Conditions: 150 mM KOAc, 10 mM MgCl2 and 150 mM bicine (pH 8.5), 24 C. Chemical mapping of a 177-nucleotide RNA with 2A3 and DMS. It was measured as part of the RMDB library TTRDEL. DMS adducts were read by reverse transcription with MarathonRT. The DMS profile rests on 1,097 reads.
RNA sequence: GGGAACGACUCGAGUAGAGUCGAAAAGAUAUGGACGGCUACAGCUUUUGACGCUUAGUCGGAAACGAUGGGAGCGAUAAGCUGGUCCGUCCUAAGUCAAAGCCACCAAGCUUCGGCUUGGUGGCAACGAAGGAAACCUGUUCGCAGGUUUCCUUCGAAAAGAAACAACAACAACAAC
Reactivity to 2A3 in 0.01 (KOAc 150mM, MgCl2 10mM, bicine 150mM(pH8.5), 24C), signal-to-noise 1, nucleotides 027 to 126: g000a030u090a030u170g000g010a020c020g060g040c030u280a300c250a020g000c030u000u130u250u300g300a100c000g010c000u000u020a010g000u000c020g000g020a090a000a000c020g010a000u020g170g300g060a020g000c000g070a070u020a120a010g030c020u000g010g010u010c020c000g000u000c000c000u000a040a000g050u010c000a110a040a080g000c050c000a010c000c000a000a010g010c000u090u300c300g150g000c020u000u000g010g000u000g010g000c000a000a000
Reactivity to DMS in 0.01 (KOAc 150mM, MgCl2 10mM, bicine 150mM(pH8.5), 24C), signal-to-noise 1, nucleotides 027 to 126: g010a010u000a300u010g000g030a020c020g020g010c100u030a230c020a010g010c000u030u000u000u030g030a110c020g000c000u000u000a300g010u000c010g030g000a090a010a140c000g000a030u000g010g010g000a000g010c020g000a110u020a010a010g040c000u000g020g020u000c000c000g010u010c030c000u000a000a060g010u000c050a070a090a150g000c000c000a000c010c010a010a030g030c000u000u000c190g070g000c000u020u000g000g020u000g000g000c000a000a000